RNA sequence: GGGAACGACUCGAGUAGAGUCGAAAAGACUUGUGGUUCGCCACAAGUCAAAUAAGCAUGUAGAAAUGGCCAAACUACAUGCAACGAAAGAAAGGCCAUAAAAAAGGACAUGCUUCGGCAUGUCCAACUUGUGUGAAUAGUUCGCUAUUCACACAAGAAAAGAAACAACAACAACAAC
Reactivity to 2A3 in 0.01 (KOAc 150mM, MgCl2 10mM, bicine 150mM(pH8.5), 24C), signal-to-noise 5, nucleotides 027 to 126: g000a000c000u000u000g000u010g020g050u060u100c220g030c060c000a010c000a010a000g000u010c000a000a000a000u010a020a010g000c010a000u000g000u000a000g010a030a050a020u020g010g020c000c000a040a010a000c010u000a010c010a010u000g000c010a030a060c070g160a060a050a080g170a100a150a040g010g000c010c000a010u080a000a040a000a000a010a020g000g000a000c000a000u000g000c020u080u110c210g070g000c000a000u000g000u000c010c000a000a010
Reactivity to DMS in 0.01 (KOAc 150mM, MgCl2 10mM, bicine 150mM(pH8.5), 24C), signal-to-noise 2, nucleotides 027 to 126: g000a000c000u000u020g010u020g000g030u010u030c170g020c000c000a010c000a000a030g000u000c000a010a020a050u000a160a140g020c000a000u000g000u000a000g010a030a000a010u010g010g000c020c010a210a180a060c000u010a010c000a000u000g000c000a120a050c220g000a100a090a140g000a060a130a090g000g020c020c000a120u040a000a020a060a060a060a120g010g010a010c000a000u000g000c030u000u010c230g040g000c000a000u000g000u000c000c010a000a010
Chemical mapping of a 177-nucleotide RNA with 2A3 and DMS. Values cover nucleotides 27 to 126. For DMS the reverse transcriptase was MarathonRT. For DMS, 1,974 sequencing reads were counted. Source: RMDB library M2PK50, as collected in RNAgym.